[RMDB]
RNA sequence: GGGAACGACUCGAGUAGAGUCGAAAAACGACCUCGCCGAGGUCGGCCGGUUGGCCGGGGUGACCCAGCUGGCCGGCUUGGCGCGAUAUCCGCAGCCGAUGGCCCCGGCCGCCGCCGCCGAACACGCGAUUUUAUCACGUUUCGACGUGAUAAAAUCAAAAGAAACAACAACAACAAC
Reactivity to DMS in 0.01 (KOAc 150mM, MgCl2 10mM, bicine 150mM(pH8.5), 24C), signal-to-noise 3, nucleotides 027 to 126: a140c100g010a130c030c010u000c030g020c080c030g010a140g010g000u000c010g000g010c050c020g020g020u000u020g060g010c000c000g000g000g010g010u010g020a180c040c050c070a110g010c080u000g010g020c090c020g010g000c040u000u000g020g020c020g010c050g010a190u000a110u010c130c030g000c020a070g010c010c000g020a110u000g000g010c020c010c020c010g010g020c020c000g000c000c010g020c070c070g030c010c010g000a060a110c150a070c170g000c130